Structure probing data (2A3) for a 177-nucleotide construct. Reactivities are rounded to 0.1 and cut off at 0 and 3. The reactions ran in a buffer of 150 mM KOAc, 10 mM MgCl2 and 150 mM bicine (pH 8.5), at 24 C. It was measured as part of the RMDB library 15KREP. High 2A3 reactivity points to a flexible backbone, as in loops and unpaired stretches.
RNA sequence: GGGAACGACUCGAGUAGAGUCGAAAAGGUAAGCUUAAUUGUAGUUUCCAGGACGCUGCCUCUAAUAUCUUUGUUAUUAACAAGGACACUUAUGCAGCUCUUAGAAACUCUUUAACUAAUGAUGCCUCUCCUUUAAAUCGUUCGCGAUUUAAAGGAGAAAAGAAACAACAACAACAAC
Reactivity to 2A3 in 0.01 (KOAc 150mM, MgCl2 10mM, bicine 150mM(pH8.5), 24C), signal-to-noise 1, nucleotides 027 to 126: g050g000u060a080a000g010c060u000u030a020a020u170u050g140u090a000g000u000u000u000c000c000a000g000g010a000c070g000c030u000g000c010c000u060c010u000a010a020u010a020u030c010u030u010u000g020u050u080a300u240u200a180a010c020a000a000g030g000a010c030a010c090u010u020a010u200g000c000a000g010c000u000c010u020u000a000g000a020a000a000c010u000c010u060u030u000a020a000c000u030a110a050u090g060a050u090g030c020c000u010